Source: RMDB library TTRDEL, as collected in RNAgym. Structure probing data (DMS and 2A3) for a 177-nucleotide construct. The DMS profile rests on 1,164 reads.
RNA sequence: GGGAACGACUCGAGUAGAGUCGAAAAGAUAUGGAUGAUGACCGAGAACUACAGCUGCUUAUCGGAAACGAUAAACAGCUGCUCGCAAGUCCUAAGUCAAACUCCUGCAGAUUCGUCUGCAGGAGAAACCAAGUCUAUGCUUCGGCAUAGACUUGGUAAAAGAAACAACAACAACAAC
Reactivity to DMS in 0.01 (KOAc 150mM, MgCl2 10mM, bicine 150mM(pH8.5), 24C), signal-to-noise 2, nucleotides 027 to 126: g000a000u000a300u000g000g050a000u000g000a190u010g000a090c300c000g000a030g000a060a070c120u000a300c020a000g020c000u000g000c010u000u000a000u000c000g010g020a060a090a200c000g010a010u000a000a000a010c010a010g000c000u000g020c060u000c010g010c010a080a250g000u000c010c020u020a050a150g000u000c020a100a190a190c000u000c010c010u000g000c000a010g000a010u000u020c210g000u010c010u000g010c000a000g000g000a000g010a000a010
Reactivity to 2A3 in 0.01 (KOAc 150mM, MgCl2 10mM, bicine 150mM(pH8.5), 24C), signal-to-noise 1, nucleotides 027 to 126: g000a030u080a010u130g020g010a000u030g030a090u230g080a080c100c100g010a010g020a110a060c240u300a110c200a010g020c000u010g020c010u070u000a000u000c000g050g000a070a000a030c010g010a000u000a000a030a010c010a000g000c000u010g000c010u000c000g000c010a140a130g000u000c010c010u050a160a050g020u000c050a040a070a100c000u010c000c000u000g000c010a020g010a070u050u210c250g110u000c110u030g000c000a000g000g000a000g000a000a000
The RNA was probed in 150 mM KOAc, 10 mM MgCl2 and 150 mM bicine (pH 8.5) at 24 C.